[RMDB]
An RNA of 177 nucleotides, treated with DMS and 2A3 and read out base by base. Values are in units of 0.01, from 0 to 300, in steps of 10. The reactions ran in a buffer of 150 mM KOAc, 10 mM MgCl2 and 150 mM bicine (pH 8.5), at 24 C.
RNA sequence: GGGAACGACUCGAGUAGAGUCGAAAAUUUUCACAAAGUUUGUGUAAGAUGCUUUCCUGGGUCGAUGUGGAUUGUGCCGUGGCCUUUUUCACCACCUUUAUAGCGGUGCUUUAACUAUUAAUAACUGAUUAGUAGAAAAUUUCGAUUUUCUACUAAUAAAAGAAACAACAACAACAAC
Reactivity to DMS in 0.01 (KOAc 150mM, MgCl2 10mM, bicine 150mM(pH8.5), 24C), signal-to-noise 3, nucleotides 027 to 126: u000u010u000u000c010a020c040a070a100a150g000u010u020u020g000u000g000u030a040a040g010a020u010g010c090u030u000u000c000c010u000g000g010g010u000c040g010a090u000g000u020g000g000a090u010u000g010u010g000c030c050g030u000g000g010c050c020u000u020u010u000u010c000a060c080c010a090c030c030u010u010u040a080u020a090g040c140g020g000u000g000c110u020u040u010a070a090c050u010a040u030u050a050a130u030a070a080c050u020g010
Reactivity to 2A3 in 0.01 (KOAc 150mM, MgCl2 10mM, bicine 150mM(pH8.5), 24C), signal-to-noise 2, nucleotides 027 to 126: u030u030u000u040c010a020c020a000a240a120g160u100u180u040g040u040g020u070a010a030g040a040u080g020c040u030u060u040c000c000u030g000g080g000u080c040g030a060u040g020u040g040g070a070u060u050g040u040g050c030c010g040u040g000g000c000c000u000u100u020u020u090c070a040c020c000a020c000c000u050u220u110a120u100a060g070c070g030g010u010g020c000u020u100u020a040a010c010u000a050u220u090a160a160u190a140a010c020u000g070